[RMDB]
RNA sequence: GGGAACGACUCGAGUAGAGUCGAAAAGCCACUGACUACGGUCAGUGGCAAUAAAUCACAGGAAACGGCCAAAGGAGAAAAUCUCACCUGUGAAAAGGCCGAACAGGCUAGGUACGCCUAGCCUGAAAUUUACGUAGUGCUUCGGCACUACGUAAAUAAAAGAAACAACAACAACAAC
Reactivity to 2A3 in 0.01 (KOAc 150mM, MgCl2 10mM, bicine 150mM(pH8.5), 24C), signal-to-noise 2, nucleotides 027 to 126: g010c000c000a010c000u000g000a000c000u000a020c150g110g000u000c000a020g010u000g030g000c030a000a000u000a030a000a010u140c010a000c000a000g000g150a070a300a050c030g050g000c060c000a110a050a060g120g000a040g030a040a280a100a200u040c000u020c020a040c000c000u020g000u060g000a000a080a000a000g030g000c050c000g030a070a080c000a040g000g000c000u010a010g000g000u010a030c150g080c040c000u000a000g000c000c000u010g000a000a000
Reactivity to DMS in 0.01 (KOAc 150mM, MgCl2 10mM, bicine 150mM(pH8.5), 24C), signal-to-noise 3, nucleotides 027 to 126: g010c000c000a010c000u000g000a010c000u000a110c210g020g010u010c000a000g010u000g000g040c020a010a000u000a020a170a190u050c020a020c010a010g000g010a160a090a100c050g020g040c000c010a050a080a100g000g030a060g020a130a070a140a110u010c030u010c020a220c020c020u020g000u020g020a030a050a120a070g010g000c010c010g020a130a270c030a000g000g000c000u000a000g000g040u010a080c240g030c000c010u000a010g000c000c000u020g040a000a030
Background
Structure probing data (2A3 and DMS) for a 177-nucleotide construct. For 2A3 the reverse transcriptase was SuperScript II with manganese. The 2A3 profile rests on 2,311 reads. The reactions ran in a buffer of 150 mM KOAc, 10 mM MgCl2 and 150 mM bicine (pH 8.5), at 24 C. The DMS profile rests on 5,982 reads. Reactivities are given for positions 27 through 126.